[RMDB]
The data come from the RNA Mapping Database (RMDB), library 15KLIB.
This 170-nucleotide RNA was probed chemically with 2A3 and DMS.
For DMS, 4,104 sequencing reads were counted.
Reactivities are given for positions 27 through 129.
The reactions ran in a buffer of 150 mM KOAc, 10 mM MgCl2 and 150 mM bicine (pH 8.5), at 24 C.

RNA sequence: GGGAACGACUCGAGUAGAGUCGAAAAGAUCAGCCACCGGAGGGGACGCGAUGCCAAAGAGUGGGGGAAAUCUCGCGAGGGAAAUCCCAAGAAGGUCGAGAAGUCUCAAGCUACGAGGGGGGACCCCAAAGGUCGGGUUUCGACCCGACCAAAAGAAACAACAACAACAAC
Reactivity to 2A3 in 0.01 (KOAc 150mM, MgCl2 10mM, bicine 150mM(pH8.5), 24C), signal-to-noise 2, nucleotides 027 to 129: g090a160u030c060a030g100c010c000a080c070c000g020g000a030g020g020g010g000a000c010g000c040g080a030u120g070c020c010a090a040a000g140a080g030u070g000g050g000g020g010a010a000a000u040c010u000c020g010c030g030a070g000g060g000a030a090a040u100c040c000c000a000a000g040a020a000g030g030u050c030g010a050g030a090a010g000u000c010u010c120a030a050g000c010u090a070c030g050a070g000g030g000g000g000g030a030c000c000c000c000a070a040a000
Reactivity to DMS in 0.01 (KOAc 150mM, MgCl2 10mM, bicine 150mM(pH8.5), 24C), signal-to-noise 3, nucleotides 027 to 129: g020a200u090c080a060g020c030c040a100c100c050g000g000a090g060g070g000g010a030c000g030c080g020a130u010g060c000c080a110a090a020g030a050g010u040g000g020g040g000g030a010a020a070u040c000u030c060g010c160g000a160g050g020g040a030a050a150u010c010c000c060a110a160g020a050a030g030g010u090c050g000a040g000a080a010g030u030c070u020c160a060a030g040c130u010a040c050g000a110g010g020g040g040g000g000a120c020c080c020c020a040a150a100